[RMDB]
RNA sequence: GGGAACGACUCGAGUAGAGUCGAAAAUCCCGAUUUCAAAUUGCUACACAAUUUACAAGCAGACAUUUGCUACAAGUUCGUCCUUUGGGAUUAUGAACGUAGCAAUAUUUAUGGUACUGCUACUAUUAAACAUUUAUCUGUUCGCAGAUAAAUGUUUAAAAGAAACAACAACAACAAC
Reactivity to DMS in 0.01 (KOAc 150mM, MgCl2 10mM, bicine 150mM(pH8.5), 24C), signal-to-noise 3, nucleotides 027 to 126: u010c010c010c000g000a130u020u010u020c120a040a030a020u000u000g010c100u020a140c210a290c020a030a040u000u010u000a110c190a110a040g020c010a010g000a070c030a090u000u000u000g010c010u000a000c040a060a130g010u000u000c000g000u000c010c000u010u010u010g030g010g000a020u000u010a020u020g020a010a030c030g000u000a000g000c000a010a010u020a040u000u010u000a060u010g010g000u000a120c000u000g010c000u010a130c120u010a080u000u000
Reactivity to 2A3 in 0.01 (KOAc 150mM, MgCl2 10mM, bicine 150mM(pH8.5), 24C), signal-to-noise 3, nucleotides 027 to 126: u000c000c030c000g000a060u130u140u010c040a040a050a010u040u040g000c030u240a040c070a010c000a060a040u050u120u240a140c080a150a020g000c000a000g010a030c020a040u030u030u020g000c000u010a000c010a120a110g000u000u010c000g000u010c020c010u080u160u290g140g000g010a000u030u080a070u280g000a010a000c010g000u000a000g010c000a000a000u020a010u000u130u030a100u090g090g000u090a090c010u000g030c010u030a080c010u020a020u060u010
The data come from the RNA Mapping Database (RMDB), library 15KREP. This 177-nucleotide RNA was probed chemically with DMS and 2A3. The 2A3 profile rests on 3,001 reads. Values are in units of 0.01, from 0 to 300, in steps of 10.